[RMDB]
RNA sequence: GGGAACGACUCGAGUAGAGUCGAAAAGCUGAGUUAUGAUGGUAAUGCACAUCAUAGUUUAAGUAGUGAUCCUUAAACACUCAGCAAGGACAGUAUGCCUUUAUGGAUCACUACAUAAAGGCUUGUGCAUCAAACCACAAGCGCAUACAGAAGAAGACGUUGGUAGCUAGUUCGCUAGCUACCAACGAAAAGAAACAACAACAACAAC
Reactivity to 2A3 in 0.01 (KOAc 150mM, MgCl2 10mM, bicine 150mM(pH8.5), 24C), signal-to-noise 3, nucleotides 027 to 156: g000c010u000g000a000g030u070u040a040u030g040a020u010g040g020u110a160a040u160g030c010a010c000a020u040c060a040u120a090g010u020u090u070a230a000g000u010a010g000u000g000a000u000c000c000u010u080a050a070a000c060a000c070u010c010a000g000c030a020a030g050g010a020c020a080g200u190a020u220g030c000c030u020u050u090a060u140g010g010a010u000c000a000c000u010a000c000a000u100a000a070a030g070g000c020u000u100g000u000g000c000a100u050c140a170a020a070c020c000a000c000a000a010g030c060g000c040a020u140a120c090a020g090a060a040g020a060a010g080a060
Reactivity to DMS in 0.01 (KOAc 150mM, MgCl2 10mM, bicine 150mM(pH8.5), 24C), signal-to-noise 1, nucleotides 027 to 156: g000c020u010g020a070g020u040u000a000u000g010a070u000g000g000u000a130a000u000g010c060a120c010a010u010c010a060u010a110g020u000u010u000a040a070g050u000a040g000u030g000a010u000c020c000u020u000a000a150a160c020a180c070u000c010a110g000c000a110a120g000g000a210c050a170g000u020a050u000g020c000c000u000u000u010a100u000g040g010a130u000c060a000c000u000a050c010a010u000a010a060a110g000g010c000u000u010g000u000g030c010a230u000c080a020a200a110c140c070a020c040a020a010g040c000g040c140a070u000a290c100a130g010a160a090g000a110a130g060a260